[RMDB]
RNA sequence: GGGAACGACUCGAGUAGAGUCGAAAAGAUAUGGAGUACUACCCACCUCCGAUGAGCGAAGAACUCGGAAACGAGGGAGCUCUAAGGAGAGGUACUCCUAAGUCAAAGCACGUGUUCGCACGUGCAACACUCGAUCAUACUUCGGUAUGAUCGAGUGAAAAGAAACAACAACAACAAC
Reactivity to 2A3 in 0.01 (KOAc 150mM, MgCl2 10mM, bicine 150mM(pH8.5), 24C), signal-to-noise 3, nucleotides 027 to 126: g070a050u240a200u300g000g000a000g000u030a010c000u150a180c010c010c020a030c040c000u000c000c010g000a130u260g010a000g010c020g070a300a060g000a110a100c000u010c040g010g030a080a040a050c020g000a010g000g000g010a030g000c000u000c000u030a060a040g020g030a020g010a000g040g000u000a010c010u000c000c010u020a100a010g130u140c140a250a030a010g010c010a000c030g000u020g040u110u210c300g030c110a000c030g000u000g070c000a000a000
Reactivity to DMS in 0.01 (KOAc 150mM, MgCl2 10mM, bicine 150mM(pH8.5), 24C), signal-to-noise 2, nucleotides 027 to 126: g000a080u050a110u000g010g000a020g010u000a030c030u020a150c030c000c020a300c150c010u000c010c000g030a290u030g000a010g010c000g000a130a130g020a160a080c020u000c010g000g000a030a030a170c000g000a020g000g000g000a040g020c000u000c000u020a130a220g000g000a000g000a080g010g000u000a020c000u000c020c000u000a030a080g030u010c220a070a110a120g020c000a010c000g020u000g000u000u030c080g020c020a020c000g020u010g000c010a000a050
Conditions: 150 mM KOAc, 10 mM MgCl2 and 150 mM bicine (pH 8.5), 24 C. Chemical mapping of a 177-nucleotide RNA with 2A3 and DMS. For DMS the reverse transcriptase was MarathonRT. Reactivities are given for positions 27 through 126. As a SHAPE reagent, 2A3 marks flexible, mostly unpaired nucleotides at the ribose 2'-OH. The DMS profile rests on 1,015 reads.